[RMDB]
RNA sequence: GGGAACGACUCGAGUAGAGUCGAAAACCAACAGUUUGUUUUGGUUUUAGCUAUUGGCUUCUGUAAUCACCAAGGGAUAGCAUACAUAGUAUUAAUCUCUAUGACUAACAGAAGCAUAUAAGCAUUCUGAGAUAGGCAUAUUCGUAUGCCUAUCUCAAAAAGAAACAACAACAACAAC
Reactivity to DMS in 0.01 (KOAc 150mM, MgCl2 10mM, bicine 150mM(pH8.5), 24C), signal-to-noise 3, nucleotides 027 to 126: c000c010a040a060c180a140g030u030u010u000g020u020u010u010u010g010g000u000u000u000u010a080g020c020u010a110u020u030g020g000c000u000u000c000u020g010u000a100a140u000c010a040c170c210a150a010g000g000g000a010u000a110g070c270a030u000a030c040a100u010a150g010u010a010u000u010a090a040u000c000u000c000u000a170u000g000a000c040u020a070a020c000a000g000a000a000g040c000a060u000a020u030a080a060g010c000a160u020u020c120
Reactivity to 2A3 in 0.01 (KOAc 150mM, MgCl2 10mM, bicine 150mM(pH8.5), 24C), signal-to-noise 2, nucleotides 027 to 126: c060c010a000a060c010a050g080u080u080u060g140u010u070u040u020g140g080u010u030u060u140a000g010c000u000a050u090u200g090g010c010u000u020c000u020g020u010a080a000u000c000a010c110c040a040a010g000g010g000a000u000a070g200c020a050u030a050c030a080u130a070g050u000a030u040u040a080a060u010c000u000c020u030a050u070g000a040c010u030a170a000c010a000g000a000a000g000c000a000u000a000u000a030a000g030c030a030u170u020c030
Chemical mapping of a 177-nucleotide RNA with DMS and 2A3. The RNA was probed in 150 mM KOAc, 10 mM MgCl2 and 150 mM bicine (pH 8.5) at 24 C. For DMS the reverse transcriptase was MarathonRT. For 2A3 the reverse transcriptase was SuperScript II with manganese. The 2A3 profile rests on 917 reads. Values cover nucleotides 27 to 126.